[RMDB]
RNA sequence: GGGAACGACUCGAGUAGAGUCGAAAAGUAAAGCGCGAGGGCUGGUGAGGAUUUGGAGGCGUGAGAGAGAUUGUAGGGAUCCUGCCUCCUCCCUCUCCGCGCGGCGCCACCUAGCCGAUAUAAAAAAACCUAAUUAAGGUUUCGACCUUAAUUAGGUAAAAGAAACAACAACAACAAC
Reactivity to DMS in 0.01 (KOAc 150mM, MgCl2 10mM, bicine 150mM(pH8.5), 24C), signal-to-noise 6, nucleotides 027 to 126: g000u000a060a140a170g010c020g010c020g010a130g020g010g030c040u020g010g020u000g000a030g000g010a080u000u010u000g010g010a040g010g010c020g000u010g010a140g000a090g000a150g000a050u000u000g010u010a150g010g010g010a050u000c020c010u000g000c010c000u000c010c010u000c150c000c000u000c010u000c000c010g010c030g000c020g010g010c040g010c020c040a090c090c020u000a120g010c050c030g000a090u010a090u040a000a000a070a070a040a060
Reactivity to 2A3 in 0.01 (KOAc 150mM, MgCl2 10mM, bicine 150mM(pH8.5), 24C), signal-to-noise 6, nucleotides 027 to 126: g030u050a030a110a050g000c020g000c040g030a280g040g130g000c100u140g020g030u020g010a010g030g020a080u290u110u150g010g010a000g010g000c030g020u200g010a090g000a000g000a010g000a080u040u100g090u190a150g010g180g030a000u010c000c000u010g000c000c000u000c000c000u010c000c000c000u000c010u000c010c000g000c020g010c000g010g010c020g010c010c000a040c000c010u020a030g030c030c020g100a060u080a040u200a240a120a020a010a010a020